[RMDB]
RNA sequence: GGGAACGACUCGAGUAGAGUCGAAAACUUCUGGUGUUCGCACCAGAAGAAAUCCGUACUCGAGGCGCCAGACGAGAGAUAUUGUGGCUGUUCCCAGCCGGAAAACCGCUCCCUUCGGGGAGCGGAAUCAUGUACUGGAGUUCGCUCCAGUACAUGAAAAAGAAACAACAACAACAAC
Reactivity to DMS in 0.01 (KOAc 150mM, MgCl2 10mM, bicine 150mM(pH8.5), 24C), signal-to-noise 2, nucleotides 027 to 126: c000u000u000c000u000g010g010u000g010u000u020c240g020c000a020c000c010a010g000a000a000g000a030a080a100u000c020c030g010u000a030c010u000c010g000a020g000g020c140g010c030c020a060g010a090c100g000a100g000a160g010a140u000a060u000u010g000u010g000g040c000u010g000u000u000c000c010c000a300g010c100c100g000g000a070a050a080a130c010c010g010c000u000c000c000c000u010u020c230g000g010g010g010a000g020c000g000g040a020a010
Reactivity to 2A3 in 0.01 (KOAc 150mM, MgCl2 10mM, bicine 150mM(pH8.5), 24C), signal-to-noise 2, nucleotides 027 to 126: c010u020u000c010u000g000g030u020g010u050u090c260g070c110a010c010c010a000g010a010a000g010a010a030a000u000c010c000g030u030a000c010u020c000g030a020g190g100c060g010c050c000a050g130a090c070g040a070g030a010g030a170u030a080u300u200g090u050g060g000c000u030g000u020u010c060c010c010a010g050c050c030g090g000a020a100a040a040c010c030g030c010u000c000c000c000u020u040c220g020g000g000g010a000g000c010g000g000a000a000